[RMDB]
RNA sequence: GGGAACGACUCGAGUAGAGUCGAAAAGAUAUGGAUCCCUCGGGAGCUUACCGUUCGGAAACGAACGGGAAGCGAAGAACGAGGGAGUCCUAAGUCAAAGUAUCAUAGGCUUCGGCCUAUGAUACAACUAUCUUAUGCUGUUCGCAGCAUAAGAUAGAAAAGAAACAACAACAACAAC
Reactivity to 2A3 in 0.01 (KOAc 150mM, MgCl2 10mM, bicine 150mM(pH8.5), 24C), signal-to-noise 3, nucleotides 027 to 126: g000a000u000a000u030g000g000a000u010c000c010c000u000c000g020g010g010a020g000c010u020u040a060c000c000g000u000u000c000g010g000a000a010a010c000g000a010a000c010g000g000g000a010a000g010c010g020a060a000g010a010a000c000g000a000g000g010g020a000g030u120c000c000u000a000a000g000u000c050a170a060a110g000u000a000u000c000a010u000a000g010g000c010u090u100c300g130g000c010c000u010a000u010g010a000u000a000c000a000a010
Reactivity to DMS in 0.01 (KOAc 150mM, MgCl2 10mM, bicine 150mM(pH8.5), 24C), signal-to-noise 5, nucleotides 027 to 126: g000a010u000a000u010g000g000a120u000c000c000c000u000c000g000g000g000a030g030c000u000u000a070c000c000g020u000u010c000g020g000a000a010a020c010g010a010a000c000g000g000g000a010a010g020c000g010a110a110g000a200a210c010g000a020g000g010g010a000g010u010c000c000u000a000a120g000u000c010a110a110a150g010u000a000u000c000a000u000a010g000g000c000u000u010c240g030g000c000c000u000a000u000g000a000u000a000c000a080a170